[RMDB]
RNA sequence: GGGAACGACUCGAGUAGAGUCGAAAAGGAUAGAUAAGUUGAGAGAUACUGCUGAGUUGGAAUAUGUUCCGAGAUUUGACACUCUUUUAUAUACUAAUACUCUAGGACUUCGUGUUAAAUUUGAAAAAUUCCCUACGCUAUUCGUAGCGUAGGGAAUAAAAGAAACAACAACAACAAC
Reactivity to DMS in 0.01 (KOAc 150mM, MgCl2 10mM, bicine 150mM(pH8.5), 24C), signal-to-noise 1, nucleotides 027 to 126: g000g030a110u030a150g010a050u010a060a090g020u010u010g010a050g000a160g010a140u000a080c050u010g000c060u000g000a110g040u010u000g030g000a080a070u000a050u010g010u010u000c010c020g000a050g000a070u000u000u000g010a060c040a060c060u010c050u020u000u000u050a090u010a170u000a140c020u000a120a090u020a050c040u010c050u000a090g000g010a090c180u000u010c110g030u020g010u000u010a010a030a130u010u000u010g020a010a050a070a180